[RMDB]
RNA sequence: GGGAACGACUCGAGUAGAGUCGAAAAAACCUUACCUGGGUUUGACAUGCACGGAUUAACCGGUGGAAACAUCGGCCACGCUCGCAAGAGUGGAACGUGCACAGGUGCUGCAUGGCUGUCGUCAGCUUGAUUGAUAAGGUUUCGACCUUAUCAAUCAAAAAGAAACAACAACAACAAC
Reactivity to 2A3 in 0.01 (KOAc 150mM, MgCl2 10mM, bicine 150mM(pH8.5), 24C), signal-to-noise 7, nucleotides 027 to 126: a000a010c020c000u030u030a050c020c010u050g030g010g050u060u060u120g110a070c060a040u070g000c000a000c000g010g010a010u000u020a010a010c000c000g000g000u010g000g010a030a030a010c000a000u010c000g000g000c010c000a040c000g010c000u000c000g030c050a070a060g010a000g010u010g000g010a000a000c000g000u000g010c010a000c000a000g010g000u030g020c020u040g000c040a120u100g060g020c030u040g060u130c040g070u070c020a010g010c020u000
Reactivity to DMS in 0.01 (KOAc 150mM, MgCl2 10mM, bicine 150mM(pH8.5), 24C), signal-to-noise 6, nucleotides 027 to 126: a040a030c020c010u010u020a070c040c040u000g000g000g020u010u010u010g020a100c170a180u010g000c000a000c000g010g000a020u000u000a090a300c010c010g000g030u000g000g000a110a080a130c000a010u010c010g000g010c000c020a140c010g000c000u000c020g000c270a070a110g000a030g010u000g000g000a010a000c010g000u000g000c000a050c070a020g010g010u010g000c060u010g000c120a050u010g010g010c020u000g000u010c080g000u010c010a020g000c080u000
Source: RMDB libraries RFM100 and RFMREP, as collected in RNAgym.
Structure probing data (2A3 and DMS) for a 177-nucleotide construct.